[RMDB]
RNA sequence: GGGAACGACUCGAGUAGAGUCGAAAAUCUAAGUUCGCUUAGAGAGUCGAUAUGGACACGCAGAUACUCCUGGUACAACAGCACCGAUCGGAAACGAUCGGUGACAUGUACCACGGGAGAGUAGUGUCCUAAGUCCUACGCACAUGUUCGCAUGUAACGUUGUGAUCAUUUUCGAAUGAUCACAACGAAAAGAAACAACAACAACAAC
Reactivity to 2A3 in 0.01 (KOAc 150mM, MgCl2 10mM, bicine 150mM(pH8.5), 24C), signal-to-noise 4, nucleotides 027 to 156: u000c010u020a010a050g020u040u100c140g060c150u010u020a010g010a010g010a040g140u120c070g050a090u040a070u300g000g000a000c010a000c020g070c220a020g020a190u130a150c000u000c010c010u040g010g010u010a010c020a120a070c040a200g040c000a000c000c000g010a000u000c000g000g050a070a080a070c010g010a000u000c000g000g010u000g000a000c000a010u010g000u010a000c000c020a040c080g020g000g000a010g000a000g020u090a050g000u000g000u000c000c000u000a000a010g000u000c000c010u030a080c140g040c020a020c010a050u040g070u090u090c190g050c100a020u070g060u150a120a040
Reactivity to DMS in 0.01 (KOAc 150mM, MgCl2 10mM, bicine 150mM(pH8.5), 24C), signal-to-noise 1, nucleotides 027 to 156: u010c020u000a000a100g010u000u000c300g040c070u020u010a010g010a030g000a110g050u000c080g000a190u020a260u020g010g050a020c000a040c000g000c130a180g030a110u000a080c000u000c000c000u020g000g050u000a000c000a050a070c050a220g000c020a020c000c010g000a020u010c000g030g000a150a120a280c030g010a000u000c000g010g000u010g000a000c000a300u000g000u020a000c000c020a040c080g000g000g000a000g070a110g000u010a110g000u000g000u000c000c000u000a000a030g000u000c100c010u000a070c150g000c050a130c080a210u000g020u000u000c100g030c030a070u000g000u000a080a120
An RNA of 207 nucleotides, treated with 2A3 and DMS and read out base by base. High DMS reactivity at an A or C suggests that its Watson-Crick edge is free. 2A3 adducts were read by reverse transcription with SuperScript II with manganese.